[RMDB]
RNA sequence: GGGAACGACUCGAGUAGAGUCGAAAAAGUUUCCCACAAUUCGAGAUUGUGGCUCAGCAGGUCACUCCGAAUGACCAUGCUAAUGCCAGAGCUUUUUCGCAUCUGGCUAGUAAACUGAUCGAACAUGCUUGCUAAGUUAGUUCGCUAACUUAGCAAGAAAAGAAACAACAACAACAAC
Reactivity to DMS in 0.01 (KOAc 150mM, MgCl2 10mM, bicine 150mM(pH8.5), 24C), signal-to-noise 9, nucleotides 027 to 126: a100g020u020u010u000c010c000c000a140c240a080a060u000u000c040g010a110g010a130u010u000g010u000g000g010c090u010c180a080g030c130a120g000g000u000c000a020c050u010c110c100g020a100a090u010g000a020c050c020a200u000g010c000u000a060a090u030g010c000c000a000g000a040g010c010u010u010u010u020u030c200g000c000a120u000c010u000g000g000c000u000a020g010u010a050a160a060c070u000g000a130u000c040g000a060a070c190a080u030g000
Reactivity to 2A3 in 0.01 (KOAc 150mM, MgCl2 10mM, bicine 150mM(pH8.5), 24C), signal-to-noise 9, nucleotides 027 to 126: a000g070u030u030u010c010c020c000a020c030a010a030u040u030c020g020a020g030a180u130u110g030u010g030g010c020u030c150a040g020c040a030g030g020u000c010a010c060u050c050c050g090a070a050u040g010a010c040c030a120u060g000c000u050a090a030u160g000c000c000a000g000a000g000c010u210u160u060u130u270c110g020c060a260u000c010u000g000g000c000u000a000g010u020a000a110a050c050u060g050a090u050c020g010a020a030c030a070u170g040

Conditions: 150 mM KOAc, 10 mM MgCl2 and 150 mM bicine (pH 8.5), 24 C. Structure probing data (DMS and 2A3) for a 177-nucleotide construct. It was measured as part of the RMDB libraries RFM100 and RFMREP. Values cover nucleotides 27 to 126.